[RMDB]
RNA sequence: GGGAACGACUCGAGUAGAGUCGAAAAUCCCAAAGCGGAUUUAGCUCGGUUGGGAGAGUACCAGACCGAAGAUCUGGGCGUCCUGUGUUCGAUCCACAGAAUUCGCACCAUAAACAACGGGAGAUUCGGCUACUCAGGCAUUCGUGCCUGAGUAGCCAAAAGAAACAACAACAACAAC
Reactivity to 2A3 in 0.01 (KOAc 150mM, MgCl2 10mM, bicine 150mM(pH8.5), 24C), signal-to-noise 1, nucleotides 027 to 126: u000c000c000c090a130a070a000g030c030g040g100a010u120u140u140a070g070c000u000c070g040g020u180u070g120g050g030a300g000a000g120u000a080c000c000a000g010a040c090c180g250a210a080g150a050u100c000u040g000g000g000c000g030u000c000c010u000g080u080g020u110u010c000g000a000u000c000c120a000c000a000g070a000a190u290u000c000g000c000a070c070c030a000u070a120a120a000c080a000a000c050g000g000g000a080g000a080u030u030c000